[RMDB]
RNA sequence: GGGAACGACUCGAGUAGAGUCGAAAAGUCAUAAAUUGUGUGCCGGAGCCAUUUUCGAAUCUCGAACAUUGAACGUCGCCGGAACAUUCGUAUCUUUCGUUGACGAAAACGCGAUUGAUGCACGUGACGAGUUCCGCUUCGGUGUUUGAGAUGCAUCACUGCAGUACUUGUUCGCAAGUACUGCAGUAAAAGAAACAACAACAACAAC
Reactivity to DMS in 0.01 (KOAc 150mM, MgCl2 10mM, bicine 150mM(pH8.5), 24C), signal-to-noise 1, nucleotides 027 to 156: g020u010c070a120u010a050a100a090u000u010g010u000g020u000g000c040c030g000g050a120g030c010c080a130u000u020u040u000c030g020a090a060u000c000u000c000g010a040a020c030a060u000u000g010a040a070c090g000u000c070g020c180c000g020g010a010a040c010a240u000u000c050g010u000a090u000c010u000u000u000c020g020u020u010g070a130c100g030a170a050a090a140c110g050c080g000a040u000u000g000a030u010g000c000a080c080g000u000g000a110c040g000a110g000u000u000c000c030g010c090u000u000c000g080g030u000g010u000u000u000g050a020g030a060u000g010c030a170u000c080
Reactivity to 2A3 in 0.01 (KOAc 150mM, MgCl2 10mM, bicine 150mM(pH8.5), 24C), signal-to-noise 4, nucleotides 027 to 156: g060u040c010a020u100a120a130a100u210u140g030u030g010u040g080c090c050g060g010a060g000c050c030a100u070u050u090u210c080g060a070a030u000c000u000c010g000a020a000c010a010u030u100g060a080a020c070g080u090c060g060c120c010g010g030a020a020c020a030u110u150c050g000u040a050u000c010u010u020u000c010g030u010u250g090a160c140g160a050a060a050a040c030g000c000g000a010u000u010g000a000u010g010c070a010c120g050u070g070a030c040g020a040g040u010u020c030c020g000c030u010u010c000g040g000u000g000u000u000u010g000a000g000a010u040g020c010a030u070c010